[RMDB]
RNA sequence: GGGAACGACUCGAGUAGAGUCGAAAAGAUCAAUUAUGAUUGCAAUGUAAUAUGUCAAGGCAGACAUAUCUAGCUGUCGCCUUAGCUAGAGAUAGCCGUUUUAUUGCUUUCAUAAGAACGGCGAGAAAUUUAUUACUAGCUUCGGCUAGUAAUAAAUAAAAGAAACAACAACAACAAC
Reactivity to 2A3 in 0.01 (KOAc 150mM, MgCl2 10mM, bicine 150mM(pH8.5), 24C), signal-to-noise 4, nucleotides 027 to 126: g070a100u140c050a020a110u090u040a040u090g020a010u020u030g000c000a010a020u040g040u200a120a050u080a070u230g100u100c060a050a040g060g000c040a030g040a070c030a050u110a070u020c050u020a030g030c020u000g050u090c020g070c030c020u030u040a010g000c000u000a000g000a000g010a040u060a040g010c010c020g020u010u020u020u110a020u010u010g000c000u010u030u060c010a010u020a040a000g030a070a010c040g050g000c050g000a050g100a050a190
Reactivity to DMS in 0.01 (KOAc 150mM, MgCl2 10mM, bicine 150mM(pH8.5), 24C), signal-to-noise 6, nucleotides 027 to 126: g010a140u000c050a110a190u000u000a020u000g000a010u000u000g010c040a040a030u000g010u010a050a090u000a040u000g000u000c160a080a090g010g010c040a120g020a050c060a050u000a070u000c080u000a040g010c070u000g000u000c070g010c050c020u000u000a030g020c010u000a000g000a120g000a120u000a070g020c020c030g010u010u000u000u000a040u010u000g000c030u000u000u000c030a020u000a020a030g010a070a060c140g010g010c030g010a120g010a080a090

This 177-nucleotide RNA was probed chemically with 2A3 and DMS. The DMS profile rests on 9,370 reads. As a SHAPE reagent, 2A3 marks flexible, mostly unpaired nucleotides at the ribose 2'-OH.